Chemical mapping of a 177-nucleotide RNA with DMS. Source: RMDB library OK2TRN, as collected in RNAgym. The DMS profile rests on 1,022 reads. Values are in units of 0.01, from 0 to 300, in steps of 10.

[RMDB]
RNA sequence: GGGAACGACUCGAGUAGAGUCGAAAAGACACGACGGAGACGUCGUGUCAAGUCCAGUGCGAAAGCACUGGACAAAUAAGGGCUGAGUUUCUCGCUGACUUUCAGCCCCAAACAAAGAAUGUCAGCAUGCCUCCUAUAUGUUCGCAUAUAGGAGGCAAAAAGAAACAACAACAACAAC
Reactivity to DMS in 0.01 (KOAc 150mM, MgCl2 10mM, bicine 150mM(pH8.5), 24C), signal-to-noise 1, nucleotides 027 to 126: g000a010c000a000c000g000a020c000g000g000a170g000a280c030g020u010c010g050u010g010u000c000a020a050g000u000c000c000a020g000u000g020c000g000a110a030a180g020c000a030c000u000g010g000a000c000a000a020a100u000a140a140g050g000g000c000u000g000a100g000u000u000u000c040u000c180g000c020u000g000a020c010u000u000u000c010a000g010c020c000c000c080a010a040a180c110a040a000a020g000a030a030u010g020u000c000a020g010c000a300